This 177-nucleotide RNA was probed chemically with 2A3 and DMS. Conditions: 150 mM KOAc, 10 mM MgCl2 and 150 mM bicine (pH 8.5), 24 C. DMS adducts were read by reverse transcription with MarathonRT. Source: RMDB library OK2TST, as collected in RNAgym. 2A3 adducts were read by reverse transcription with SuperScript II with manganese. The DMS profile rests on 2,083 reads. The 2A3 profile rests on 875 reads.
[RMDB]
RNA sequence: GGGAACGACUCGAGUAGAGUCGAAAAAGGAUUCUAUGUCAAGCAAGGUGUUGAAUUGACUAUAUAUAAAGGUGGUCCAGAACUAAAUGAUGAGGUCUAUACCUUCUCUAGACUACAGGGAAUGUGAGCUAAUACGGGGAUUCGUCCCCGUAUUAGCAAAAGAAACAACAACAACAAC
Reactivity to 2A3 in 0.01 (KOAc 150mM, MgCl2 10mM, bicine 150mM(pH8.5), 24C), signal-to-noise 2, nucleotides 027 to 126: a010g060g010a000u080u050c020u050a080u150g020u020c010a020a000g020c060a080a100g060g080u120g110u110u160g090a220a170u050u000g020a000c010u010a020u000a020u000a000u050a170a120a010g170g000u050g050g000u080c060c030a040g050a040a020c050u120a030a090a130u150g010a060u120g060a060g000g060u030c060u080a100u070a080c000c010u040u070c040u000c050u000a030g020a080c020u040a030c120a040g050g010g120a050a080u220g050u070g070a010
Reactivity to DMS in 0.01 (KOAc 150mM, MgCl2 10mM, bicine 150mM(pH8.5), 24C), signal-to-noise 3, nucleotides 027 to 126: a080g020g000a080u000u000c030u030a070u010g000u000c030a030a050g020c200a040a090g000g020u000g030u000u010g010a090a100u000u000g000a050c030u010a130u000a080u000a100u000a060a080a110g010g010u000g000g010u010c010c060a050g000a050a080c120u000a040a120a130u010g010a080u000g000a090g000g000u000c170u010a090u010a110c030c050u000u000c120u000c020u000a060g010a060c050u020a040c140a040g000g000g000a050a060u000g010u000g010a170